[RMDB]
RNA sequence: GGGAACGACUCGAGUAGAGUCGAAAAUGUAGCUAAGAAUGGAGAUUACAGGUCCUCCAAAAUUUAUGCAAGUCUACAGCACGGGUGACCAGAUAUGCUGAGCAACCGCUCUUCCAGGACGAGGUAGAAGUCCGUAGUCUUUCGAGACUACGGACUUAAAAGAAACAACAACAACAAC
Reactivity to 2A3 in 0.01 (KOAc 150mM, MgCl2 10mM, bicine 150mM(pH8.5), 24C), signal-to-noise 2, nucleotides 027 to 126: u060g000u080a130g060c040u000a100a090g070a120a030u080g040g000a010g060a120u300u160a070c060a110g060g050u050c010c010u000c060c120a150a140a000a070u000u070u080a150u140g020c020a060a100g010u000c040u040a060c020a000g000c030a040c070g000g040g040u020g050a190c010c000a010g040a000u160a060u100g090c080u060g010a000g010c000a000a000c040c020g000c030u000c000u140u070c060c000a010g010g120a020c060g020a030g010g030u110a040g090
Reactivity to DMS in 0.01 (KOAc 150mM, MgCl2 10mM, bicine 150mM(pH8.5), 24C), signal-to-noise 2, nucleotides 027 to 126: u020g000u000a000g030c000u000a040a220g000a210a250u010g010g000a000g000a090u000u000a090c200a070g000g010u050c130c000u000c010c040a000a040a070a060u020u020u000a050u050g010c090a090a190g010u000c020u070a070c080a030g050c060a080c150g040g000g000u070g000a080c050c020a090g000a230u000a040u000g020c040u020g000a080g000c000a090a030c080c050g000c000u000c020u010u000c000c000a160g000g000a030c080g000a070g010g080u010a000g000
This 177-nucleotide RNA was probed chemically with 2A3 and DMS. Source: RMDB library OK1LIB, as collected in RNAgym. 2A3 adducts were read by reverse transcription with SuperScript II with manganese. The reactions ran in a buffer of 150 mM KOAc, 10 mM MgCl2 and 150 mM bicine (pH 8.5), at 24 C. The DMS profile rests on 1,550 reads.